[RMDB]
RNA sequence: GGGAACGACUCGAGUAGAGUCGAAAAGAUCAAUUAUGAUUGCAAUGUAAUAUGUGAAGGCAGACAUAUCUAGCUGUCGCCUUAGCUAGAGAUAGCCGAUUUAUUGCUUUCAUAAGAACGGCAAGAAGAUGGCAGUCCUAUUCGUAGGACUGCCAUCAAAAGAAACAACAACAACAAC
Reactivity to 2A3 in 0.01 (KOAc 150mM, MgCl2 10mM, bicine 150mM(pH8.5), 24C), signal-to-noise 1, nucleotides 027 to 126: g090a060u120c070a020a060u010u040a010u000g000a000u000u060g000c000a000a020u060g020u160a030a050u040a110u250g130u060g140a060a040g000g000c060a010g010a110c010a030u270a070u090c050u060a020g070c020u020g040u090c060g160c030c000u000u030a000g050c000u000a000g000a000g050a060u030a040g020c020c010g000a000u000u090u000a000u000u000g000c000u000u000u040c020a010u010a010a010g030a060a010c070g080g020c070a040a010g060a050a020
Reactivity to DMS in 0.01 (KOAc 150mM, MgCl2 10mM, bicine 150mM(pH8.5), 24C), signal-to-noise 2, nucleotides 027 to 126: g020a100u040c080a120a190u000u010a000u000g000a040u010u000g000c000a010a000u000g000u000a010a020u010a020u000g080u020g000a070a080g000g010c000a110g020a090c210a110u000a080u010c110u010a070g000c110u000g020u010c220g000c100c110u000u000a020g000c000u000a010g000a110g000a090u000a030g020c020c070g010a110u000u000u020a020u000u000g000c000u000u010u000c010a020u000a010a020g010a080a140c210g030g030c170a060a090g000a110a120
The record gives the reactivity of an RNA of 177 nucleotides to 2A3 and DMS. It was measured as part of the RMDB library OK2TRN. Reactivities are given for positions 27 through 126. For DMS, 1,209 sequencing reads were counted. DMS adducts were read by reverse transcription with MarathonRT.